Background: The data come from the RNA Mapping Database (RMDB), library OK2TRN. This 177-nucleotide RNA was probed chemically with DMS and 2A3. Reactivities are given for positions 27 through 126. For DMS, 5,326 sequencing reads were counted. The RNA was probed in 150 mM KOAc, 10 mM MgCl2 and 150 mM bicine (pH 8.5) at 24 C. DMS adducts were read by reverse transcription with MarathonRT.

RNA sequence: GGGAACGACUCGAGUAGAGUCGAAAAAGGGAAACCGAGUCUGAAUAGGGCGACUUAGUAUCAUGAUGUAGACCCGAAACCUAGUGACCUAUCCAUGAGCAGGGUGAAGGUGUGGUAAGACGCACUGAUGGUGAACAUGAUUCGUCAUGUUCACCAUAAAAGAAACAACAACAACAAC
Reactivity to DMS in 0.01 (KOAc 150mM, MgCl2 10mM, bicine 150mM(pH8.5), 24C), signal-to-noise 5, nucleotides 027 to 126: a050g010g010g010a120a120a100c040c020g000a090g010u000c010u000g030a100a080u000a110g010g000g010c110g010a070c070u020u000a070g020u000a070u000c060a060u010g010a070u000g020u000a060g020a120c030c020c010g000a060a080a080c070c030u000a070g010u000g010a090c050c030u010a040u010c060c040a050u010g000a100g020c070a100g010g010g030u000g020a070a060g000g000u000g020u000g010g010u010a130a100g010a120c100g000c040a030c030u010g010
Reactivity to 2A3 in 0.01 (KOAc 150mM, MgCl2 10mM, bicine 150mM(pH8.5), 24C), signal-to-noise 2, nucleotides 027 to 126: a010g050g000g000a070a000a000c020c020g000a030g000u000c040u080g030a080a070u090a200g010g000g030c030g010a020c030u070u070a020g080u040a090u220c050a070u090g070a020u080g070u100a020g070a080c000c000c010g030a050a020a000c020c000u010a030g070u040g100a040c000c010u050a040u090c000c030a030u040g020a020g070c040a030g030g050g010u010g050a080a010g010g020u010g000u010g000g030u070a080a000g060a050c000g000c010a000c070u060g030